[RMDB]
The data come from the RNA Mapping Database (RMDB), library OK1LIB. Structure probing data (DMS and 2A3) for a 177-nucleotide construct. The reactions ran in a buffer of 150 mM KOAc, 10 mM MgCl2 and 150 mM bicine (pH 8.5), at 24 C. For 2A3, 12,922 sequencing reads were counted.
RNA sequence: GGGAACGACUCGAGUAGAGUCGAAAAGGAUGAAGGCCUACGGGUUGUAAACCUCUUUCAGCAGGGACGAAGCGUGAGUGACGGUACCUGCAGAAGAAGCACCGGCUAACAACGUGCCAGCAGCCGCAAUAAUUUUGAUAUUCGUAUCAAAAUUAUUAAAAGAAACAACAACAACAAC
Reactivity to DMS in 0.01 (KOAc 150mM, MgCl2 10mM, bicine 150mM(pH8.5), 24C), signal-to-noise 9, nucleotides 027 to 126: g010g010a100u020g010a120a100g000g010c030c020u010a090c100g010g000g010u000u010g010u010a080a150a140c070c020u010c030u010u010u010c030a140g010c010a010g000g010g000a300c090g010a050a300g000c020g000u050g000a170g010u010g000a300c010g010g000u030a200c010c000u010g010c010a100g000a000a000g000a000a000g000c000a000c000c000g000g000c000u000a000a000c010a000a000c000g000u010g010c010c010a070g010c070a060g000c010c010g010c130
Reactivity to 2A3 in 0.01 (KOAc 150mM, MgCl2 10mM, bicine 150mM(pH8.5), 24C), signal-to-noise 8, nucleotides 027 to 126: g100g020a050u190g090a100a030g040g020c010c020u030a020c120g050g020g000u060u080g050u120a080a080a040c010c000u030c040u010u060u080c040a030g000c000a010g010g010g010a020c000g010a020a010g020c020g020u140g070a150g010u060g010a030c000g010g030u170a050c010c000u000g000c000a000g000a000a000g000a000a000g000c000a000c000c000g000g000c000u000a000a000c000a000a000c000g020u050g030c010c010a020g000c020a010g030c010c010g030c020